[RMDB]
The record gives the reactivity of an RNA of 177 nucleotides to DMS and 2A3.
RNA sequence: GGGAACGACUCGAGUAGAGUCGAAAAGCUCGGCGUUAAAUUGCUUUACCACGACUGGGACUUGAUUUAAUCCCGCGAGUUGGGCAGCACGUAGUCGGCGCUCACCGGCGAUUAAUAGAUAGUUGCCCACCAGUGGGUUAUUCGUAACCCACUGGUGAAAAGAAACAACAACAACAAC
Reactivity to DMS in 0.01 (KOAc 150mM, MgCl2 10mM, bicine 150mM(pH8.5), 24C), signal-to-noise 3, nucleotides 027 to 126: g040c010u010c060g000g020c080g010u000u000a040a140a140u000u000g020c090u000u010u010a290c050c080a050c070g000a170c140u020g020g010g010a060c060u000u000g010a150u010u010u010a090a140u000c020c010c010g020c080g010a080g010u000u020g010g000g000c130a060g010c020a070c150g000u010a130g010u000c030g000g000c040g000c070u000c120a110c130c020g010g010c030g010a050u000u010a030a100u010a110g000a100u010a080g000u000u000g000c000c020
Reactivity to 2A3 in 0.01 (KOAc 150mM, MgCl2 10mM, bicine 150mM(pH8.5), 24C), signal-to-noise 1, nucleotides 027 to 126: g040c010u000c070g010g060c020g070u150u130a040a100a190u250u160g050c000u100u030u240a150c020c040a040c010g090a110c050u000g030g030g130a080c020u050u040g050a090u150u150u150a070a040u040c030c040c000g000c010g050a090g000u140u190g010g000g000c030a030g020c000a020c060g020u070a040g030u050c040g020g030c050g000c010u000c030a050c060c000g070g000c020g020a030u080u140a150a090u060a110g140a080u120a100g040u000u010g040c040c000

Conditions: 150 mM KOAc, 10 mM MgCl2 and 150 mM bicine (pH 8.5), 24 C. The 2A3 profile rests on 783 reads.